[RMDB]
RNA sequence: GGGAACGACUCGAGUAGAGUCGAAAAACCCCUUCAGCGAACAGAAGGGCUCCUCCUCCUCGGGAGUAGGCCCGUAGCGAUGGGGAGGGAUGCUAGGAGUUGGGGGAGACCGAAGCGAGGAGGAAAGAUAGUCGACGGUUCGCCGUCGACAAAAGAAACAACAACAACAAC
Reactivity to DMS in 0.01 (KOAc 150mM, MgCl2 10mM, bicine 150mM(pH8.5), 24C), signal-to-noise 3, nucleotides 027 to 129: a000c080c000c010c060u010u010c050a110g060c060g040a030a080c060a070g020a070a170g000g000g060c040u020c140c020u000c030c000u040c000c060u020c070g040g000g020a050g010u050a050g040g040c050c010c020g030u050a040g040c080g060a140u040g000g040g000g020a040g020g010g050a020u020g030c060u030a020g040g000a030g050u000u020g000g040g000g000g010a050g020a070c000c000g020a070a020g020c090g050a040g090g000a060g020g060a040a070a080g040a120u020a060
Reactivity to 2A3 in 0.01 (KOAc 150mM, MgCl2 10mM, bicine 150mM(pH8.5), 24C), signal-to-noise 3, nucleotides 027 to 129: a000c010c000c000c000u050u090c020a070g040c000g050a020a010c010a050g130a090a050g050g000g000c000u020c000c000u010c000c000u020c000c010u030c010g020g020g010a040g010u050a030g050g070c000c070c000g030u070a010g020c040g070a110u170g000g000g000g010a030g030g000g000a050u110g000c050u050a050g000g090a030g000u090u110g010g000g000g010g000a060g010a010c010c020g000a020a040g030c020g000a030g000g020a000g010g020a000a000a040g110a010u270a040